Conditions: 150 mM KOAc, 10 mM MgCl2 and 150 mM bicine (pH 8.5), 24 C. The record gives the reactivity of an RNA of 170 nucleotides to 2A3 and DMS. 2A3 adducts were read by reverse transcription with SuperScript II with manganese. It was measured as part of the RMDB library 15KLIB. The 2A3 profile rests on 3,381 reads.
[RMDB]
RNA sequence: GGGAACGACUCGAGUAGAGUCGAAAACACUAAUAGCUGCCUUGUAUCGUCUGAUGGACAACCUGGCGGUGAUGCUAUUAGUUUGAGUUUUAAUAACCUUUUAGGGUUUGAUUCUAGUAAACCAGUCGAGGGUCCACCUUCGGGUGGACCAAAAGAAACAACAACAACAAC
Reactivity to 2A3 in 0.01 (KOAc 150mM, MgCl2 10mM, bicine 150mM(pH8.5), 24C), signal-to-noise 3, nucleotides 027 to 129: c030a000c010u030a010a010u010a000g020c050u020g080c000c000u000u000g090u070a070u180c060g010u000c040u020g260a120u230g080g010a030c000a000a040c000c060u000g010g000c050g000g010u180g040a000u200g010c000u000a020u000u040a000g010u010u050u210g100a090g050u040u070u030u050a100a160u040a070a000c000c000u050u130u150u300a110g000g020g000u030u000u080g010a020u040u010c000u000a020g030u180a010a170a090c000c000a020g050u050c060g140a010g060
Reactivity to DMS in 0.01 (KOAc 150mM, MgCl2 10mM, bicine 150mM(pH8.5), 24C), signal-to-noise 1, nucleotides 027 to 129: c020a060c000u000a000a000u000a020g030c000u040g040c000c000u030u000g000u050a110u000c190g060u010c000u030g030a160u000g000g000a010c030a060a030c070c010u070g010g000c070g050g050u020g030a000u060g050c040u000a000u020u020a060g000u050u050u030g010a070g050u000u000u000u000a010a130u040a000a000c020c010u010u000u090u150a170g020g000g090u030u000u000g000a140u000u010c040u030a170g060u090a100a000a130c060c120a060g020u030c060g040a170g000